[RMDB]
RNA sequence: GGGAACGACUCGAGUAGAGUCGAAAAUAAGCAAAAGACAACCACCUUUCCCGCUGACAAUAGCGUUAUCCCUCUGCACUUCGGUAAUAUGAGGGCACAGUAAAUCCCGCAAGGAUGAGGAUGUGAUUAAACAGUUACAGCUUCGGCUGUAACUGAAGUCUAGAAACGUGUUCGCACGUUUCUAGACAAAAGAAACAACAACAACAAC
Reactivity to 2A3 in 0.01 (KOAc 150mM, MgCl2 10mM, bicine 150mM(pH8.5), 24C), signal-to-noise 2, nucleotides 027 to 156: u100a020a020g060c030a070a090a020a000g070a140c040a000a070c020c000a070c020c040u000u030u030c000c020c000g000c090u080g030a140c060a110a190u130a160g070c020g040u100u120a100u160c010c000c000u040c000u000g000c040a020c010u020u010c170g090g000u030a030a040u120a080u230g000a020g000g000g000c020a000c000a000g030u020a000a010a110u010c050c020c000g060c030a040a000g070g000a020u030g010a060g090g000a040u090g000u020g050a030u090u150a070a040a080c010a000g010u000u000a000c000a000g000c000u010u050c100g110g010c000u000g000u000a000a000c000u000g000a020a000
Reactivity to DMS in 0.01 (KOAc 150mM, MgCl2 10mM, bicine 150mM(pH8.5), 24C), signal-to-noise 1, nucleotides 027 to 156: u000a120a060g000c080a040a070a090a190g040a140c070a050a090c020c000a060c050c050u030u030u000c020c020c020g040c040u000g010a080c170a140a100u020a060g010c060g030u000u000a180u000c030c000c000u000c060u030g000c110a110c100u000u000c150g050g020u010a100a160u000a100u000g000a000g040g010g020c090a000c010a160g000u010a060a140a100u000c000c000c070g030c130a050a110g000g040a050u010g000a060g000g020a100u010g040u000g020a090u000u000a060a140a210c000a060g020u000u000a020c010a020g000c000u000u000c260g160g010c000u010g020u000a000a000c000u000g060a000a060
Overview
This 207-nucleotide RNA was probed chemically with 2A3 and DMS. The RNA was probed in 150 mM KOAc, 10 mM MgCl2 and 150 mM bicine (pH 8.5) at 24 C. Values are in units of 0.01, from 0 to 300, in steps of 10. For DMS, 1,494 sequencing reads were counted.